[RMDB]
The record gives the reactivity of an RNA of 177 nucleotides to 2A3 and DMS. It was measured as part of the RMDB library OK1LIB. For 2A3, 1,091 sequencing reads were counted. DMS adducts were read by reverse transcription with MarathonRT. The RNA was probed in 150 mM KOAc, 10 mM MgCl2 and 150 mM bicine (pH 8.5) at 24 C.
RNA sequence: GGGAACGACUCGAGUAGAGUCGAAAAGUUUCAGCUGGUCGCUACUCGUCACCGCAGCCGACAGAUUCUCCAGGAAGUAAGCUGUCAGAAUCGCCUCCCGUUCAUGUAGCGUCGUCAGCUGUGGAGCAUUAGGCACUGGUUUCGACCAGUGCCUAAUAAAAGAAACAACAACAACAAC
Reactivity to 2A3 in 0.01 (KOAc 150mM, MgCl2 10mM, bicine 150mM(pH8.5), 24C), signal-to-noise 2, nucleotides 027 to 126: g030u000u080u030c000a000g000c000u010g020g020u040c000g010c040u010a020c000u070c020g110u030c010a030c080c020g090c020a000g020c000c020g010a020c030a010g110a030u050u020c020u000c030c040a030g080g010a090a050g150u230a040a040g120c000u000g030u060c050a080g080a020a110u080c010g030c020c010u050c010c020c020g020u070u040c110a160u200g030u010a000g000c000g000u000c010g080u040c080a010g000c000u000g020u000g000g030a080g030c100
Reactivity to DMS in 0.01 (KOAc 150mM, MgCl2 10mM, bicine 150mM(pH8.5), 24C), signal-to-noise 2, nucleotides 027 to 126: g000u000u000u000c000a040g030c000u000g010g000u020c010g050c000u010a050c030u070c090g000u020c040a090c100c040g000c030a110g000c050c040g000a050c000a030g000a130u030u020c020u030c050c080a050g000g000a020a100g000u020a070a090g000c020u000g010u000c020a000g000a070a040u020c070g020c030c020u000c030c030c070g010u010u020c110a090u050g000u010a020g020c050g020u040c030g000u000c050a050g020c000u000g020u030g000g010a190g010c220